[RMDB]
This 177-nucleotide RNA was probed chemically with 2A3 and DMS. The 2A3 profile rests on 1,685 reads.
RNA sequence: GGGAACGACUCGAGUAGAGUCGAAAACUCAAGGCGGUCAUCCAAGAAGAGGCCUACAAAUCCAUUCGGACCACACUGCAAGCCGCCAAACAUCUCAACCCCUACGCUCACCCAUCAGAGACUGCCGAGUACGAGGAUGGUUCGCCAUCCUCGUACUAAAAGAAACAACAACAACAAC
Reactivity to 2A3 in 0.01 (KOAc 150mM, MgCl2 10mM, bicine 150mM(pH8.5), 24C), signal-to-noise 3, nucleotides 027 to 126: c010u010c020a020a040g040g020c000g020g010u040c010a120u040c100c020a050a040g040a080a010g070a060g070g010c010c010u090a090c080a040a120a000u000c030c020a110u040u140c030g020g020a050c000c000a010c000a020c070u060g000c010a050a000g010c010c010g000c040c040a050a120a010c040a080u070c040u010c020a090a140c010c000c000c040u010a020c040g000c010u020c000a020c020c000c000a020u040c040a010g060a020g010a060c020u020g030c010c000g000
Reactivity to DMS in 0.01 (KOAc 150mM, MgCl2 10mM, bicine 150mM(pH8.5), 24C), signal-to-noise 2, nucleotides 027 to 126: c060u000c070a190a170g000g000c060g000g000u000c160a120u000c080c070a120a050g000a010a210g040a050g000g000c020c000u000a050c100a130a030a040u060c040c040a000u000u020c120g000g000a040c100c080a050c060a050c010u060g000c070a080a080g020c050c050g000c000c070a060a060a080c120a040u020c110u000c020a070a200c150c020c000c020u010a050c000g000c030u000c070a090c050c000c050a100u040c230a110g000a040g000a020c160u000g040c000c000g130